[RMDB]
An RNA of 177 nucleotides, treated with DMS and 2A3 and read out base by base. Source: RMDB library OK2TRN, as collected in RNAgym. High DMS reactivity at an A or C suggests that its Watson-Crick edge is free. The reactions ran in a buffer of 150 mM KOAc, 10 mM MgCl2 and 150 mM bicine (pH 8.5), at 24 C.
RNA sequence: GGGAACGACUCGAGUAGAGUCGAAAAUCUAGGUGUGAUAUGAUCCAUGGAUCCUAGGUACGAGAGAGAGCAGAGUACAUACGAUCGAUCGUACAUCGACGACAUCUAGUGAUAUCUGAUCCGAUCAGACCGAUACCUAUUUCGAUAGGUAUCGGUCAAAAGAAACAACAACAACAAC
Reactivity to DMS in 0.01 (KOAc 150mM, MgCl2 10mM, bicine 150mM(pH8.5), 24C), signal-to-noise 3, nucleotides 027 to 126: u010c010u010a040g010g020u000g030u000g030a140u000a130u000g000a040u000c030c100a130u010g020g000a020u000c010c030u000a100g010g010u000a020c000g000a020g000a300g000a030g000a200g030c050a050g000a210g020u000a070c160a120u010a080c090g000a170u000c010g000a210u000c000g010u030a020c060a030u000c050g000a150c290g010a040c010a000u000c010u000a010g010u000g000a120u010a080u000c080u000g000a070u000c040c040g040a120u000c140a070
Reactivity to 2A3 in 0.01 (KOAc 150mM, MgCl2 10mM, bicine 150mM(pH8.5), 24C), signal-to-noise 4, nucleotides 027 to 126: u000c010u010a020g030g000u010g030u020g070a190u050a100u230g020a020u010c050c080a100u210g100g000a000u000c000c020u080a140g000g000u000a000c000g010a000g000a000g000a000g000a000g070c090a020g060a040g220u130a090c070a160u200a040c040g020a030u020c000g000a020u000c000g000u000a010c010a050u120c030g070a060c070g020a000c000a020u020c000u010a010g030u020g030a030u040a090u130c080u100g060a090u010c000c070g030a070u070c040a030